[RMDB]
RNA sequence: GGGAACGACUCGAGUAGAGUCGAAAAGGUGACCGUCCCGGCGAAUUGGGUGCACACGCACGCUUGAUAGACCUCGCCCGCGCCGAUAGCUUCCAGACACGCCAGUACCCCGUCGCGGUGCGCUGCCGUAGACUUAACCGUUCGCGGUUAAGUCUACAAAAGAAACAACAACAACAAC
Reactivity to 2A3 in 0.01 (KOAc 150mM, MgCl2 10mM, bicine 150mM(pH8.5), 24C), signal-to-noise 2, nucleotides 027 to 126: g080g040u050g040a080c020c050g040u060c020c010c010g030g000c000g020a040a090u110u070g060g010g010u060g040c040a090c020a040c200g010c000a040c060g060c060u070u050g040a040u140a140g050a090c000c000u040c000g010c040c010c000g000c000g000c000c010g030a020u070a030g000c010u080u000c030c000a020g000a110c040a020c070g020c010c020a060g040u120a160c000c000c000c000g050u010c040g000c020g030g060u070g040c070g000c040u060g040c030c020
Reactivity to DMS in 0.01 (KOAc 150mM, MgCl2 10mM, bicine 150mM(pH8.5), 24C), signal-to-noise 2, nucleotides 027 to 126: g000g000u010g000a090c100c060g020u000c030c030c030g040g010c050g040a110a120u000u000g010g020g040u000g000c060a100c090a100c170g020c010a040c090g000c030u000u000g000a110u010a100g000a100c060c020u000c040g000c020c010c020g010c040g010c040c020g000a060u000a040g020c040u000u000c030c030a130g010a110c100a070c060g000c060c030a060g010u000a150c030c030c000c050g010u010c070g000c030g000g020u000g020c080g010c150u000g020c090c070
An RNA of 177 nucleotides, treated with 2A3 and DMS and read out base by base. Source: RMDB library OK2TST, as collected in RNAgym. 2A3 adducts were read by reverse transcription with SuperScript II with manganese. For DMS the reverse transcriptase was MarathonRT. The reactions ran in a buffer of 150 mM KOAc, 10 mM MgCl2 and 150 mM bicine (pH 8.5), at 24 C. The 2A3 profile rests on 1,696 reads.